Record summary
Conditions: 150 mM KOAc, 10 mM MgCl2 and 150 mM bicine (pH 8.5), 24 C. An RNA of 177 nucleotides, treated with 2A3 and read out base by base. It was measured as part of the RMDB library OK1LIB. Reactivities are given for positions 27 through 126. The 2A3 profile rests on 496 reads.
[RMDB]
RNA sequence: GGGAACGACUCGAGUAGAGUCGAAAAGGUAUCUUUAAAAUUGGACAUUUUUCAAUUUAUUUUAUCUUACUUAUUGGUGUCCUUUUAGGAACAUUUUUUAGAAGCAUAACAGGUUUUAUUCAACUGACCCUUCGUAUCCUUUCGAGGAUACGAAGGGAAAAGAAACAACAACAACAAC
Reactivity to 2A3 in 0.01 (KOAc 150mM, MgCl2 10mM, bicine 150mM(pH8.5), 24C), signal-to-noise 2, nucleotides 027 to 126: g030g010u020a090u060c010u040u220u150a040a050a000a090u020u050g000g000a040c020a060u140u130u020u120u180c040a090a040u020u050u000a050u110u110u070u030a150u110c040u090u130a060c000u180u060a050u000u170g000g000u010g000u000c000c000u200u030u020u090a080g010g020a000a000c040a100u020u070u070u000u000u000a080g060a210a020g020c060a010u190a280a100c140a040g000g110u030u030u050u160a050u030u080c060a120a060c040u080g110a060